[RMDB]
RNA sequence: GGGAACGACUCGAGUAGAGUCGAAAACAGCAAUUAUUCGUAAUUGCUGAAUGGCCGACCCAGCGCGGAAGGAGCGCGCAGGACUCCUUCGCCGCCUUUUAAUAAGCAGGUACUUCGGUACCUGCAAUAGUGCUCUUGAUUUCGAUCAAGAGCACUAAAAAGAAACAACAACAACAAC
Reactivity to DMS in 0.01 (KOAc 150mM, MgCl2 10mM, bicine 150mM(pH8.5), 24C), signal-to-noise 2, nucleotides 027 to 126: c000a040g020c000a000a000u000u000a020u010u010c180g040u000a000a000u000u000g010c000u010g000a040a070u030g000g010c110c060g000a160c020c000c010a220g020c090g010c050g040g000a040a020g010g000a010g030c070g020c150g000c120a070g040g040a170c010u000c000c020u000u010c060g010c070c050g000c050c130u010u040u010u010a060a130u000a110a150g000c000a000g000g020u000a000c000u000u000c170g020g020u000a000c000c010u000g000c000a000a020
Reactivity to 2A3 in 0.01 (KOAc 150mM, MgCl2 10mM, bicine 150mM(pH8.5), 24C), signal-to-noise 1, nucleotides 027 to 126: c000a000g000c000a000a000u020u020a010u060u160c200g020u080a030a010u000u000g000c000u000g000a020a070u060g000g000c010c000g030a060c010c010c000a060g010c020g000c050g130g020a020a000g020g000a000g020c100g000c020g010c090a040g010g160a110c010u000c020c000u020u020c000g010c040c010g000c000c000u220u170u120u090a170a210u200a130a110g000c000a000g030g000u000a000c000u040u050c140g050g000u000a000c020c000u000g000c010a000a000
An RNA of 177 nucleotides, treated with DMS and 2A3 and read out base by base. For 2A3 the reverse transcriptase was SuperScript II with manganese. The 2A3 profile rests on 1,205 reads. Conditions: 150 mM KOAc, 10 mM MgCl2 and 150 mM bicine (pH 8.5), 24 C. Source: RMDB library M2PK50, as collected in RNAgym. For DMS, 1,187 sequencing reads were counted.